[RMDB]
RNA sequence: GGGAACGACUCGAGUAGAGUCGAAAACAGAACGGCAUUCACAAUUUCCAGAUAUUGAAACGGUGCCAGCAUGGAUGCGUGCGCAAGCUUGAAUGCCUGCACCACGAUGAGGUGACUGACCGUACCACGUGGUACUGAUAUUCGUAUCAGUACCACGAAAAGAAACAACAACAACAAC
Reactivity to DMS in 0.01 (KOAc 150mM, MgCl2 10mM, bicine 150mM(pH8.5), 24C), signal-to-noise 5, nucleotides 027 to 126: c210a180g000a150a060c040g010g010c010a090u000u000c020a030c040a100a080u010u010u000c080c100a140g000a100u010a080u010u020g000a100a110a070c170g010g000u000g010c050c090a050g000c030a050u000g000g020a100u010g000c020g020u010g020c200g000c100a050a050g010c000u000u020g010a080a060u010g000c020c020u000g030c000a010c050c000a110c080g000a060u000g000a120g010g020u000g000a030c120u000g000a160c020c010g000u000a180c070c060a210
Reactivity to 2A3 in 0.01 (KOAc 150mM, MgCl2 10mM, bicine 150mM(pH8.5), 24C), signal-to-noise 6, nucleotides 027 to 126: c030a010g100a060a010c010g000g010c010a000u030u000c010a010c020a080a200u040u100u060c040c010a040g100a160u150a110u190u190g090a090a080a050c090g010g000u010g010c010c010a000g020c010a000u050g030g160a070u110g030c040g090u140g060c110g000c090a070a050g010c000u090u120g120a120a010u040g020c000c000u010g000c020a010c010c000a010c050g040a060u100g060a030g120g010u010g010a020c010u020g070a260c000c000g010u010a070c020c020a060